[RMDB]
RNA sequence: GGGAACGACUCGAGUAGAGUCGAAAAAGCGCCGCUGCGUGUACGUUUGAUGAAGACGGCGUUGCGCCGAACUCCGUGGACGAAUCGUUACCAAUGUUAAACGAUGCCAAGCAAACUCGCGCUAAUCCAAGUCGAUGACUUUCGAGUCAUCGACUUGAAAAGAAACAACAACAACAAC
Reactivity to 2A3 in 0.01 (KOAc 150mM, MgCl2 10mM, bicine 150mM(pH8.5), 24C), signal-to-noise 2, nucleotides 027 to 126: a000g000c070g010c000c000g000c010u000g030c040g060u120g070u070a060c030g010u020u020u050g270a260u140g010a090a030g080a020c000g020g000c030g030u080u110g040c040g000c000c020g030a130a070c020u040c020c010g050u060g000g020a060c040g050a110a000u010c010g000u030u030a100c050c030a230a190u280g030u250u190a010a050a010c000g020a040u070g000c050c050a080a000g000c000a020a040a090c050u020c060g000c030g000c020u020a060a010u020c020
Reactivity to DMS in 0.01 (KOAc 150mM, MgCl2 10mM, bicine 150mM(pH8.5), 24C), signal-to-noise 2, nucleotides 027 to 126: a100g050c030g000c040c090g020c070u000g000c010g030u000g000u020a070c120g000u000u000u000g030a100u000g010a030a140g000a300c020g000g000c030g010u010u010g060c010g020c010c010g000a090a100c040u000c050c060g050u020g000g010a140c040g000a180a030u000c030g000u000u000a120c100c060a100a110u020g010u000u000a040a020a020c050g030a030u000g000c040c050a090a070g030c000a020a040a130c150u010c070g000c010g000c060u000a080a140u000c030
Chemical mapping of a 177-nucleotide RNA with 2A3 and DMS.
DMS (dimethyl sulfate) methylates the pairing face of unpaired adenines and cytosines.
The data come from the RNA Mapping Database (RMDB), library OK2TRN.